Overview: The data come from the RNA Mapping Database (RMDB), library OK1LIB. This 177-nucleotide RNA was probed chemically with DMS and 2A3. The reactions ran in a buffer of 150 mM KOAc, 10 mM MgCl2 and 150 mM bicine (pH 8.5), at 24 C. For DMS, 2,544 sequencing reads were counted. For 2A3, 1,386 sequencing reads were counted.
RNA sequence: GGGAACGACUCGAGUAGAGUCGAAAACUGUGAAAGUUCAGAGGAAAUCGAUUUGUUUCCGGAAUCGCUAAUCUCGAGAAAUUUCCAGAUUUUGUGCACUGAAGUCCACUGAAAACAGACUAGUCGGGAUAGUGAGUCACUUCGGUGACUCACUAUCAAAAGAAACAACAACAACAAC
Reactivity to DMS in 0.01 (KOAc 150mM, MgCl2 10mM, bicine 150mM(pH8.5), 24C), signal-to-noise 2, nucleotides 027 to 126: c000u010g000u070g020a060a040a020g020u000u010c010a170g030a100g040g000a030a060a080u060c080g000a090u000u000u000g020u010u030u000c000c040g010g010a040a050u010c020g000c080u010a120a130u050c010u000c000g020a170g020a010a070a090u000u000u010c000c000a010g000a170u020u010u000u000g000u010g000c120a070c020u000g000a070a120g000u010c010c080a110c070u000g000a070a060a100a080c110a130g000a110c040u010a080g000u000c070g020g000
Reactivity to 2A3 in 0.01 (KOAc 150mM, MgCl2 10mM, bicine 150mM(pH8.5), 24C), signal-to-noise 3, nucleotides 027 to 126: c000u010g040u090g180a080a030a020g060u060u030c060a010g020a020g030g080a010a040a110u110c040g020a070u030u080u180g070u050u140u000c060c000g050g040a020a030u010c020g000c080u070a080a060u110c010u000c000g160a170g000a040a040a030u020u000u010c010c000a010g010a040u040u130u070u110g050u040g010c070a020c070u020g040a060a000g070u000c000c010a030c090u040g050a050a040a030a040c000a010g050a040c020u020a030g080u070c100g080g000